[RMDB]
RNA sequence: GGGAACGACUCGAGUAGAGUCGAAAACUAUUCGGGGGCAGAUUCUCAUUUAGUUAUGGUAGACAAACACUUAAUUGCUUAAGGUCACUCGUUAUCGCAAGUUCGACUAUAUCACUGACAUUGAAAAGCCGAGAAUGAAGUUCGCUUCAUUCUCGGCAAAAGAAACAACAACAACAAC
Reactivity to 2A3 in 0.01 (KOAc 150mM, MgCl2 10mM, bicine 150mM(pH8.5), 24C), signal-to-noise 1, nucleotides 027 to 126: c000u090a170u000u000c000g000g000g000g070g060c120a090g060a210u000u000c000u000c000a010u270u160u000a000g090u150u000a000u020g020g090u040a010g000a130c050a000a120a000c030a000c080u040u040a080a090u220u120g040c010u090u140a030a030g010g000u000c000a020c090u000c000g000u000u100a040u080c000g000c060a060a000g030u190u130c030g030a040c000u080a040u000a000u230c000a010c090u060g130a170c050a100u070u040g060a150a170a000a000